An RNA of 177 nucleotides, treated with DMS and 2A3 and read out base by base. The RNA was probed in 150 mM KOAc, 10 mM MgCl2 and 150 mM bicine (pH 8.5) at 24 C. The 2A3 profile rests on 1,386 reads. For DMS the reverse transcriptase was MarathonRT. It was measured as part of the RMDB library OK1LIB. For DMS, 2,856 sequencing reads were counted.

RNA sequence: GGGAACGACUCGAGUAGAGUCGAAAAGAAAGCGCGAGUCGUAUGUCCGGCCAAAUGCGACGACAGCGAGAUCCUGAAAGGCCGGAAAGGAUCGAGCUGGAGGCUGCGAAGCAGUCGAGCGCGAAAAGGGAAAUACGUAGUUCGCUACGUAUUUCCCAAAAGAAACAACAACAACAAC
Reactivity to DMS in 0.01 (KOAc 150mM, MgCl2 10mM, bicine 150mM(pH8.5), 24C), signal-to-noise 2, nucleotides 027 to 126: g020a150a140a120g000c030g030c040g000a090g000u000c020g020u050a040u060g010u010c060c010g020g020c000c040a040a100a030u020g010c060g010a010c050g030a090c020a020g000c000g030a170g000a010u000c000c000u000g010a060a090a090g010g020c030c000g000g000a030a080a080g010g000a000u010c000g080a210g000c000u000g020g010a120g000g000c020u000g000c000g000a200a190g070c000a000g000u000c000g000a090g000c000g030c000g030a040a030a150a070
Reactivity to 2A3 in 0.01 (KOAc 150mM, MgCl2 10mM, bicine 150mM(pH8.5), 24C), signal-to-noise 1, nucleotides 027 to 126: g120a040a060a000g030c040g020c060g000a020g060u000c040g000u000a120u050g180u000c000c000g020g000c000c000a110a100a010u110g000c000g000a000c010g050a040c010a000g000c020g020a010g000a020u000c000c000u020g030a140a020a000g010g000c000c000g000g000a060a060a000g010g000a000u000c000g000a000g030c000u000g000g020a030g020g000c000u010g000c030g070a160a000g040c000a000g000u000c010g020a000g060c030g010c010g050a000a000a050a000